The record gives the reactivity of an RNA of 177 nucleotides to 2A3 and DMS. The 2A3 profile rests on 4,023 reads. Values cover nucleotides 27 to 126. For DMS, 3,091 sequencing reads were counted.

[RMDB]
RNA sequence: GGGAACGACUCGAGUAGAGUCGAAAAAUAGAGCGCAAGAGUCUAGCUAGUAAGUAGGAUUCUCAUAAGGAAUCAUUUCCACUAUGAAUCUAGUCACUAAAUAAACACAAUUAGCUACUGUGUGUAAGAAUAGCAGAAAGUUCGCUUUCUGCUAUUCAAAAGAAACAACAACAACAAC
Reactivity to 2A3 in 0.01 (KOAc 150mM, MgCl2 10mM, bicine 150mM(pH8.5), 24C), signal-to-noise 4, nucleotides 027 to 126: a010u110a030g080a020g020c080g020c070a090a030g030a010g120u030c020u040a030g020c000u000a020g020u030a050a080g010u020a010g090g030a020u060u000c030u000c020a070u060a090a050g010g010a000a010u010c010a030u070u120u010c030c000a050c020u030a030u100g030a030a020u020c000u010a010g030u090c020a020c080u110a080a060a150u200a040a140a000c020a000c010a030a090u080u040a040g000c020u040a030c010u030g020u000g000u010g000u050a080a020
Reactivity to DMS in 0.01 (KOAc 150mM, MgCl2 10mM, bicine 150mM(pH8.5), 24C), signal-to-noise 4, nucleotides 027 to 126: a090u010a080g010a040g010c090g020c100a120a070g010a080g000u010c080u000a090g010c040u000a020g010u020a080a190g020u000a060g000g000a020u000u000c010u000c040a070u020a170a300g010g000a010a010u000c040a140u000u000u000c070c140a300c050u000a010u000g010a120a100u000c000u000a020g010u010c110a060c120u000a040a060a090u010a060a020a020c020a010c010a020a030u000u000a130g000c100u010a090c130u000g000u000g000u000g010u010a050a110